[RMDB]
RNA sequence: GGGAACGACUCGAGUAGAGUCGAAAAUGUUGAAUUUUAUGAAGACCGCAUCUUGGACUUUAAAGUUCUUGAUAAUGGUAUCAUUAGGGAUGUAAAUCCUGAUGAUAAGUGCUUUGCUAAUAAGCACGCUACAAUUAUAGUUCGCUAUAAUUGUAGCAAAAGAAACAACAACAACAAC
Reactivity to DMS in 0.01 (KOAc 150mM, MgCl2 10mM, bicine 150mM(pH8.5), 24C), signal-to-noise 7, nucleotides 027 to 126: u000g010u010u010g000a110a070u000u000u010u010a080u020g010a150a140g010a170c020c020g020c260a040u000c010u000u010g010g000a020c010u000u010u000a110a120a090g020u000u000c000u000u000g000a030u000a090a110u010g010g010u000a030u000c000a020u000u000a080g030g010g010a030u000g000u020a110a090a040u000c000c000u000g000a010u000g000a020u010a050a140g020u000g000c000u000u000u000g010c220u010a060a100u000a010a010g000c000a010c030
Reactivity to 2A3 in 0.01 (KOAc 150mM, MgCl2 10mM, bicine 150mM(pH8.5), 24C), signal-to-noise 6, nucleotides 027 to 126: u090g010u050u060g040a080a110u030u010u110u130a110u110g060a070a030g050a050c000c010g030c040a010u010c010u010u010g010g000a010c010u080u110u230a170a300a010g000u000u000c000u000u010g010a010u020a080a060u150g010g010u030a010u010c010a000u000u040a080g060g000g020a020u080g050u230a070a080a070u010c010c010u000g000a010u010g000a000u010a090a070g000u000g000c010u000u030u060g050c050u040a130a060u050a130a070g000c000a000c020
Description: This 177-nucleotide RNA was probed chemically with DMS and 2A3. The data come from the RNA Mapping Database (RMDB), library 15KREP. DMS adducts were read by reverse transcription with MarathonRT. Conditions: 150 mM KOAc, 10 mM MgCl2 and 150 mM bicine (pH 8.5), 24 C. The DMS profile rests on 10,995 reads.